[RMDB]
RNA sequence: GGGAACGACUCGAGUAGAGUCGAAAAAAUGUCUUCGGGCUUGGCGUGCGGCGCAUGCGGGUCCGUCGGGGAUGCAUCCACGUCGAUGAGCACAUAGUCGCCGGACCAGCGCAGAUUCGACACCGACCAUUCAAGCUCGUUUCGACGAGCUUGAAUGAAAAGAAACAACAACAACAAC
Reactivity to 2A3 in 0.01 (KOAc 150mM, MgCl2 10mM, bicine 150mM(pH8.5), 24C), signal-to-noise 3, nucleotides 027 to 126: a000a000u200g020u010c030u040u030c040g030g000g020c010u050u090g090g020c030g040u110g010c060g070g010c040g000c040a010u030g020c000g010g030g010u000c000c000g000u010c010g000g000g020g000a010u060g020c030a040u070c040c020a120c100g160u130c050g120a040u040g020a010g030c020a020c020a110u060a020g110u000c010g010c050c020g040g020a020c020c010a050g050c030g000c020a020g020a200u050u040c000g020a010c020a020c030c020g060a040c000
Reactivity to DMS in 0.01 (KOAc 150mM, MgCl2 10mM, bicine 150mM(pH8.5), 24C), signal-to-noise 2, nucleotides 027 to 126: a040a000u100g000u020c010u020u000c040g000g020g010c060u000u000g000g010c050g000u000g000c010g040g000c080g070c090a130u010g000c020g000g000g020u000c010c090g000u000c010g000g010g000g060a000u000g040c100a000u000c010c020a150c230g040u030c230g000a040u000g000a140g000c140a140c020a010u010a090g000u000c000g020c090c050g000g010a020c010c020a150g010c050g000c030a030g010a120u010u000c050g000a070c070a130c020c030g000a120c040
The record gives the reactivity of an RNA of 177 nucleotides to 2A3 and DMS. The reactions ran in a buffer of 150 mM KOAc, 10 mM MgCl2 and 150 mM bicine (pH 8.5), at 24 C. The DMS profile rests on 2,679 reads. It was measured as part of the RMDB library OK1LIB. The 2A3 profile rests on 2,214 reads.